[RMDB]
RNA sequence: GGGAACGACUCGAGUAGAGUCGAAAAGAUAUGGAAGCGUUUUAGACGAAGAACACACAGAGAACGCAUAUCGGAAACGAUAUGCGACUGUGUGGGAGUCUGGACGCUUCCUAAGUCAAAACUCGGUAUAUGAAGAUUCGUCUUCAUAUACCGAGAACGGUAUCUUACGUUUCGACGUAAGAUACCGAAAAGAAACAACAACAACAAC
Reactivity to 2A3 in 0.01 (KOAc 150mM, MgCl2 10mM, bicine 150mM(pH8.5), 24C), signal-to-noise 2, nucleotides 027 to 156: g000a000u060a050u100g010g000a010a000g000c020g070u010u110u190u300a030g110a010c040g130a220a080g000a050a000c020a010c020a000c020a010g030a010g110a300a010c020g000c010a020u000a000u000c000g020g000a050a080a000c010g000a000u000a020u000g000c000g020a030c000u010g000u000g000u010g000g000g000a010g010u000c000u000g000g020a000c010g010c000u000u010c000c000u000a000a000g000u000c010a000a030a030a200c000u000c000g000g000u010a000u000a000u000g000a000a000g000a020u030u160c220g050u000c110u000u020c010a000u000a000u000a000c000c000g000a000g000a000a000